An RNA of 207 nucleotides, treated with 2A3 and DMS and read out base by base. Values cover nucleotides 27 to 156. The RNA was probed in 150 mM KOAc, 10 mM MgCl2 and 150 mM bicine (pH 8.5) at 24 C. It was measured as part of the RMDB library OK3TST.
RNA sequence: GGGAACGACUCGAGUAGAGUCGAAAAAAAAAGAACGAAGAUGAGGGUGACUUCAUUUGAUGUAUCUUAUUGGGUAGGGCUGCUGGAAACUUUCCACAUUUAUGAAUGAAGCCUAACCUCCUUCAAGCUAUAGGGAACUUUUUAGAUACUUUUCCCUAUUGUGUAGUACAUUCGUGUACUACACAAUAAAAGAAACAACAACAACAAC
Reactivity to 2A3 in 0.01 (KOAc 150mM, MgCl2 10mM, bicine 150mM(pH8.5), 24C), signal-to-noise 5, nucleotides 027 to 156: a000a010a000a000a010g050a070a000c050g010a020a000g020a040u080g000a010g010g020g000u060g030a030c000u020u000c010a040u030u060u130g050a080u060g020u050a060u020c050u060u090a120u200u200g040g000g000u030a030g000g020g020c020u060g030c020u010g070g040a070a180a160c050u120u110u010c040c000a050c020a100u100u160u130a150u210g060a010a000u010g010a010a000g000c000c000u030a090a120c010c010u010c010c000u020u040c050a070a060g020c040u070a050u100a150g020g030g020a040a030c030u100u080u030u100u120a090g040a080u110a130c030u060u060u040u030c010c000c000u000
Reactivity to DMS in 0.01 (KOAc 150mM, MgCl2 10mM, bicine 150mM(pH8.5), 24C), signal-to-noise 3, nucleotides 027 to 156: a050a020a080a040a070g010a050a060c070g030a080a030g000a100u000g000a050g030g010g020u000g010a110c000u000u000c020a030u000u000u010g020a140u010g020u010a060u000c020u000u010a100u000u000g010g010g020u010a120g020g020g060c030u000g010c040u010g040g000a100a050a070c050u010u000u010c000c030a080c080a090u000u000u000a070u020g010a040a050u010g010a040a030g020c000c010u000a070a060c030c010u000c050c010u000u000c050a090a190g010c070u010a100u000a000g000g010g000a060a040c090u000u000u000u000u020a070g010a220u010a040c060u020u010u000u000c000c000c020u000